Chemical mapping of a 177-nucleotide RNA with DMS and 2A3.

RNA sequence: GGGAACGACUCGAGUAGAGUCGAAAAAAACAAACUAUGGCUGCUGGCCCGCAUAGUCUCAGUUACACCCUUACAUCUGAAGGUCUUGAAGUGCAUAUUAUUUCUGCUGGGCUCGAUUGCAAGGCUGUCUAUACUAAUUCUUCGGAAUUAGUAUAGAAAAAGAAACAACAACAACAAC
Reactivity to DMS in 0.01 (KOAc 150mM, MgCl2 10mM, bicine 150mM(pH8.5), 24C), signal-to-noise 8, nucleotides 027 to 126: a060a030a050c060a090a060a070c070u000a060u000g010g010c030u000g010c060u000g010g010c040c030c060g010c050a050u000a050g000u000c040u000c090a070g000u000u000a100c140a120c070c010c010u000u010a090c130a070u000c060u010g010a090a080g000g000u000c030u000u000g010a070a070g010u000g010c080a040u000a070u010u010a110u000u000u000c050u000g000c040u010g010g010g010c030u000c090g000a090u010u000g000c040a040a050g000g010c040u000g000
Reactivity to 2A3 in 0.01 (KOAc 150mM, MgCl2 10mM, bicine 150mM(pH8.5), 24C), signal-to-noise 5, nucleotides 027 to 126: a000a000a020c070a050a030a000c040u060a060u120g070g000c010u040g020c020u040g060g000c000c000c000g000c000a030u050a070g020u010c010u000c050a020g020u040u060a040c040a080c040c010c000u030u070a090c040a120u090c060u110g080a110a040g000g020u010c000u020u070g050a090a020g050u030g070c060a030u060a070u280u100a100u040u160u020c030u040g010c010u050g010g020g010c000u010c020g080a080u040u090g010c010a000a040g030g000c010u030g020
It was measured as part of the RMDB library OK2TRN.
For DMS, 14,833 sequencing reads were counted.
The 2A3 profile rests on 10,272 reads.
For DMS the reverse transcriptase was MarathonRT.
The RNA was probed in 150 mM KOAc, 10 mM MgCl2 and 150 mM bicine (pH 8.5) at 24 C.